[RMDB]
RNA sequence: GGGAACGACUCGAGUAGAGUCGAAAAUUACGGUGUCGCGCUACUCUGCCAGCCCUCUGGAUGAGAGCAGGCAGCGGCGCAGCCUCCGAGACGAGAAUGUCGAAGUCGAGGUCGACGCCAGCCUCGAGAUAUGACCAGUAUUCGUACUGGUCAUAUCAAAAGAAACAACAACAACAAC
Reactivity to DMS in 0.01 (KOAc 150mM, MgCl2 10mM, bicine 150mM(pH8.5), 24C), signal-to-noise 9, nucleotides 027 to 126: u010u010a110c130g020g020u000g020u000c050g020c130g010c000u000a090c170u010c010u010g020c000c000a070g030c010c010c020u000c000u000g020g010a180u010g000a010g010a020g020c010a050g010g010c000a010g030c300g000g000c050g020c050a210g000c020c010u000c020c020g010a300g000a030c020g010a130g010a130a100u020g020u000c020g000a120a090g010u010c120g000a030g010g010u000c130g010a060c040g010c020c010a150g010c050c010u000c060g010a220
Reactivity to 2A3 in 0.01 (KOAc 150mM, MgCl2 10mM, bicine 150mM(pH8.5), 24C), signal-to-noise 9, nucleotides 027 to 126: u120u060a050c080g000g000u010g010u040c030g000c000g010c010u040a060c040u020c010u080g010c000c000a020g010c020c030c000u010c030u100g290g080a190u300g010a050g000a000g000c010a010g000g000c000a000g000c020g000g010c000g000c000a000g000c000c000u000c010c030g040a050g000a010c030g020a020g140a300a200u290g040u040c020g030a070a010g070u100c040g000a000g010g020u050c060g020a020c020g010c010c000a020g020c010c010u050c020g060a080
Conditions: 150 mM KOAc, 10 mM MgCl2 and 150 mM bicine (pH 8.5), 24 C. The record gives the reactivity of an RNA of 177 nucleotides to DMS and 2A3. 2A3 adducts were read by reverse transcription with SuperScript II with manganese. Source: RMDB library OK2TST, as collected in RNAgym. The DMS profile rests on 26,625 reads. The 2A3 profile rests on 30,473 reads.